Structure probing data (2A3) for a 207-nucleotide construct. For 2A3 the reverse transcriptase was SuperScript II with manganese.
RNA sequence: GGGAACGACUCGAGUAGAGUCGAAAAACAGAAGGGUGAAAGUUCAAGCAAGCUAGCCGGCAAAAAAGCAAACUUGACCACCAAGGAUAAAAGAGAUCUUAUCCAAGGAGGCAAAAGAUAAUCUCACAAAAGCUUCAUUCGUUCGCGAAUGAAGCAACCAUCGUUCUCAGUUCGCUGAGAACGAUGGAAAAGAAACAACAACAACAAC
Reactivity to 2A3 in 0.01 (KOAc 150mM, MgCl2 10mM, bicine 150mM(pH8.5), 24C), signal-to-noise 1, nucleotides 027 to 156: a010c040a020g050a110a060g120g040g010u060g060a090a120a040g020u070u090c050a050a030g000c000a030a000g020c060u040a020g000c000c000g030g040c050a020a060a030a060a040a040g020c050a080a060a010c010u020u050g030a200c000c000a000c010c000a020a000g000g000a000u000a010a100a030a010g100a020g020a050u050c000u030u020a010u000c000c000a010a020g010g000a010g000g000c010a000a180a000a030g040a010u070a040a040u160c020u000c040a100c040a050a080a010a010g000c000u010u000c000a010u010u000c030g040u000u030c190g020c030g150a000a000u020g020a000a010g000c000a000a000
Conditions: 150 mM KOAc, 10 mM MgCl2 and 150 mM bicine (pH 8.5), 24 C.